Source: RMDB library RFMREP, as collected in RNAgym. This 177-nucleotide RNA was probed chemically with DMS and 2A3. DMS adducts were read by reverse transcription with MarathonRT. The DMS profile rests on 3,527 reads. Conditions: 150 mM KOAc, 10 mM MgCl2 and 150 mM bicine (pH 8.5), 24 C. For 2A3 the reverse transcriptase was SuperScript II with manganese. Reactivities are given for positions 27 through 126.
[RMDB]
RNA sequence: GGGAACGACUCGAGUAGAGUCGAAAAAGGAGUGCGGACUGUCGUCUGAUUGUUUGAGGGUGCCAGAUGUAAAUAAUCGGUGGAGCGGCUGCAAAAGAGCCGUCUCGCUGGGUAAAAUCAGGAUGUGCAACGUUAUAUCCUUCGGGAUAUAACGUUGAAAAGAAACAACAACAACAAC
Reactivity to DMS in 0.01 (KOAc 150mM, MgCl2 10mM, bicine 150mM(pH8.5), 24C), signal-to-noise 3, nucleotides 027 to 126: a070g010g000a050g010u010g010c060g030g000a060c060u000g030u010c080g010u000c050u000g010a090u000u000g000u000u010u000g010a100g010g000g020u010g000c040c040a070g000a080u000g010u000a040a070a080u010a070a060u010c020g030g020u010g020g020a040g010c030g010g000c010u000g000c110a080a040a130a200g000a050g010c010c000g010u010c010u000c010g010c050u000g010g010g020u000a020a040a070a080u010c060a060g010g010a080u000g020u010g000
Reactivity to 2A3 in 0.01 (KOAc 150mM, MgCl2 10mM, bicine 150mM(pH8.5), 24C), signal-to-noise 1, nucleotides 027 to 126: a000g080g010a040g010u060g020c000g010g040a010c020u000g010u120c030g030u000c040u050g050a110u060u000g060u030u090u080g050a090g010g030g000u020g040c000c000a030g010a030u040g040u070a040a110a070u090a050a050u090c030g000g020u060g040g010a020g020c000g000g000c000u070g010c020a150a020a000a030g110a050g040c000c000g080u000c000u010c000g010c000u040g000g040g040u090a050a080a000a090u100c020a040g100g060a050u080g020u040g050